[RMDB]
RNA sequence: GGGAACGACUCGAGUAGAGUCGAAAAGGACAGGGACUGGAAGAGAGGACGCGGUCGAGUAGGUGUGCACCAGCCCUGGCAACGAGAGCGUCUACCCCGAACUCUGCUGGCCUUGAGGUGGGGAAGCACACGCUUCCCAGUUCGCUGGGAAGCGUGUAAAAGAAACAACAACAACAAC
Reactivity to 2A3 in 0.01 (KOAc 150mM, MgCl2 10mM, bicine 150mM(pH8.5), 24C), signal-to-noise 2, nucleotides 027 to 126: g040g000a010c000a030g040g020g040a100c040u040g020g080a130a010g060a030g040a050g110g000a010c040g010c040g080g100u070c020g020a030g060u070a040g080g020u070g000u040g080c030a030c030c000a010g010c010c000c010u020g040g040c000a020a040c050g040a020g000a000g100c040g060u010c030u090a160c030c000c000c000g030a040a030c020u020c010u000g010c020u030g100g000c010c050u030u070g020a030g050g020u140g010g010g010g010a030a010g070c030
Reactivity to DMS in 0.01 (KOAc 150mM, MgCl2 10mM, bicine 150mM(pH8.5), 24C), signal-to-noise 3, nucleotides 027 to 126: g010g020a110c040a050g010g010g000a120c020u010g010g020a110a110g000a080g010a120g030g000a050c060g010c030g010g000u000c050g010a110g010u020a060g020g000u000g040u000g020c060a160c030c040a070g010c020c020c030u000g010g020c080a090a100c080g000a070g000a080g000c030g000u000c030u010a180c030c000c020c010g010a080a160c070u000c020u010g000c030u000g010g000c020c030u010u010g000a070g000g010u010g000g000g000g010a070a080g010c090
Structure probing data (2A3 and DMS) for a 177-nucleotide construct. Values cover nucleotides 27 to 126.